RNA sequence: GGGAACGACUCGAGUAGAGUCGAAAACACCUGUCAGCCGGUGUCGGGCAGGUCAGGUUUGGAGGGAAGGCCUGCGCGGCUGUCCACAGGUGGUUUGGUCAAGGGCAGCCUCAGAAGGUGGCACAGGAAAGGGUGUGCGGGGUGCAGGCCUGACCAAAUCAGCACCAUGAUUCGUCAUGGUGCUGAUAAAAGAAACAACAACAACAAC
Reactivity to 2A3 in 0.01 (KOAc 150mM, MgCl2 10mM, bicine 150mM(pH8.5), 24C), signal-to-noise 1, nucleotides 027 to 156: c030a010c000c010u000g000u050c000a030g000c000c040g120g040u120g040u150c040g020g010g010c020a020g030g020u030c020a020g000g100u060u140u140g110g070a080g040g020g000a070a000g000g010c000c000u000g000c030g000c000g010g000c000u010g010u000c010c020a050c020a040g060g070u110g080g000u110u090u100g030g000u060c080a130a130g000g000g000c010a000g000c010c030u040c060a040g060a100a030g120g020u140g100g000c020a010c010a040g140g080a160a050a010g180g020g030u030g020u030g040c020g000g020g000g030u040g020c000a050g010g010c000c000u020g020a010c030c000a000a050
Chemical mapping of a 207-nucleotide RNA with 2A3. Values cover nucleotides 27 to 156.